The data come from the RNA Mapping Database (RMDB), library TTRDEL. The record gives the reactivity of an RNA of 177 nucleotides to 2A3 and DMS. DMS adducts were read by reverse transcription with MarathonRT. High DMS reactivity at an A or C suggests that its Watson-Crick edge is free.

[RMDB]
RNA sequence: GGGAACGACUCGAGUAGAGUCGAAAAGAUAUGGAUAUAAUAACUCCCUGGAGCGUUGAAAUCGGAAACGAUGGAGCUCCCUGGAGAGUUAUAUCCUAAGUCAAACAGUCAUGUUCGCAUGACUGAAGUAUUGGAAACAGUUCGCUGUUUCCAAUACAAAAGAAACAACAACAACAAC
Reactivity to 2A3 in 0.01 (KOAc 150mM, MgCl2 10mM, bicine 150mM(pH8.5), 24C), signal-to-noise 2, nucleotides 027 to 126: g020a020u070a010u170g000g010a020u020a020u010a040a050u090a210a300c010u000c000c000c010u000g010g000a000g000c020g150u300u050g010a030a040a000u010c000g010g020a050a040a060c010g000a010u010g030g000a000g040c000u000c030c030c000u010g000g010a010g000a000g020u020u000a000u010a010u010c000c000u010a130a000g030u030c030a090a040a070c000a010g000u000c000a010u010g010u030u140c300g000c170a000u000g010a000c000u000g000a060a040
Reactivity to DMS in 0.01 (KOAc 150mM, MgCl2 10mM, bicine 150mM(pH8.5), 24C), signal-to-noise 2, nucleotides 027 to 126: g010a020u000a300u000g010g000a010u000a000u000a030a030u010a130a130c010u000c000c000c030u010g000g000a020g010c000g010u000u010g000a090a160a010u000c000g010g000a150a080a220c010g000a010u000g000g000a140g000c010u000c000c000c030u000g000g000a040g030a300g000u000u000a000u000a000u000c000c000u000a050a120g000u000c050a130a160a220c010a000g000u000c010a010u000g010u010u020c200g010c010a020u000g000a020c010u000g000a070a090